[RMDB]
RNA sequence: GGGAACGACUCGAGUAGAGUCGAAAACACAGUUCGAGCUUGAAUUGCGUUUCGUAGGUUACGUCUACGUUAAAACGUUACAGUUAAAUAUAACUGCUAAAAACGAAAACAACUCUUACGCUUUAGCUGCCUAAAAACAGUUAGCGUAGAUCCUCUCGAAUCAUCCCCACUUCGGUGGGGAUGAUUCAAAAGAAACAACAACAACAAC
Reactivity to 2A3 in 0.01 (KOAc 150mM, MgCl2 10mM, bicine 150mM(pH8.5), 24C), signal-to-noise 2, nucleotides 027 to 156: c030a000c000a020g000u030u020c050g090a120g070c210u140u250g040a000a000u030u020g010c000g030u040u010u060c020g000u010a010g010g010u080u010a010c010g000u050c030u000a000c000g070u040u060a030a040a000a000c000g000u000u000a000c000a010g010u050u040a050a300a230u270a140u050a170a000c000u020g050c060u090a050a090a060a000a060c060g040a020a060a050a000c040a020a200c070u070c000u110u060a000c000g010c010u140u140u090a000g000c020u020g020c010c020u120a070a040a010a000a000c000a000g000u020u000a000g000c000g000u000a020g000a000u000c000c010u000c000u040c080
The record gives the reactivity of an RNA of 207 nucleotides to 2A3. It was measured as part of the RMDB library RSTRND. The 2A3 profile rests on 701 reads. Values cover nucleotides 27 to 156. Conditions: 150 mM KOAc, 10 mM MgCl2 and 150 mM bicine (pH 8.5), 24 C.